[RMDB]
RNA sequence: GGGAACGACUCGAGUAGAGUCGAAAACUAUAUAAGGCCCCCUCGUCGUCCUCCUCGUCGUCAGACAGGGGUGUCUGCGUCACCUGAGGGUCCUCCUCGCUGUGUGACGUGGUGAUCGGUGAGUACGCGGAUAGCCCUUAUUCGUAAGGGCUAUCCGAAAAGAAACAACAACAACAAC
Reactivity to DMS in 0.01 (KOAc 150mM, MgCl2 10mM, bicine 150mM(pH8.5), 24C), signal-to-noise 2, nucleotides 027 to 126: c050u010a120u020a160u000a180a090g010g010c030c020c030c070c010u010c020g020u000c010g030u020c030c010u000c000c010u000c220g020u000c020g000u020c300a100g000a030c030a020g020g000g000g000u000g020u000c010u000g000c030g000u000c010a030c000c020u000g010a030g020g010g010u010c190c160u020c030c000u000c000g000c180u000g000u000g020u000g010a010c010g000u020g000g030u000g000a080u000c020g020g000u000g010a060g010u030a070c240g010
Reactivity to 2A3 in 0.01 (KOAc 150mM, MgCl2 10mM, bicine 150mM(pH8.5), 24C), signal-to-noise 1, nucleotides 027 to 126: c030u030a010u050a080u090a300a220g140g010c060c000c010c000c020u020c000g010u000c000g000u030c020c000u000c000c020u040c080g010u020c030g120u040c070a010g000a010c000a000g010g010g010g010u020g070u000c010u000g010c000g000u000c000a000c000c020u020g000a020g040g040g090u300c000c030u210c000c000u040c020g020c160u100g130u050g000u000g120a000c020g010u000g040g020u030g010a080u060c020g040g000u040g010a000g040u100a040c170g010